About this RNA: The record gives the reactivity of an RNA of 177 nucleotides to 2A3.
RNA sequence: GGGAACGACUCGAGUAGAGUCGAAAAGAAAGAGGCUAAACCGUGUCAACUAUGAUGGCCUUACAAAGCUCGACGAAAAGAAACACUUGAUACUACCGAAAGCCAGAGCUGCUGCCUACGGAAGAAAACGUGCGAUAGUCUUCGGACUAUCGCACGUAAAAGAAACAACAACAACAAC
Reactivity to 2A3 in 0.01 (KOAc 150mM, MgCl2 10mM, bicine 150mM(pH8.5), 24C), signal-to-noise 1, nucleotides 027 to 126: g300a000a090a050g100a030g000g000c000u210a290a000a000c000c030g220u030g110u110c000a070a070c040u000a160u180g110a100u230g080g090c000c000u000u090a000c000a000a200a000g030c000u000c070g080a100c000g080a000a000a000a180g180a000a030a000c000a000c000u000u140g030a030u000a130c000u000a000c010c000g140a200a000a000g080c000c020a010g000a000g070c110u050g110c000u000g000c030c000u000a000c050g030g050a030a000g020a000a290a020
2A3 adducts were read by reverse transcription with SuperScript II with manganese. Conditions: 150 mM KOAc, 10 mM MgCl2 and 150 mM bicine (pH 8.5), 24 C.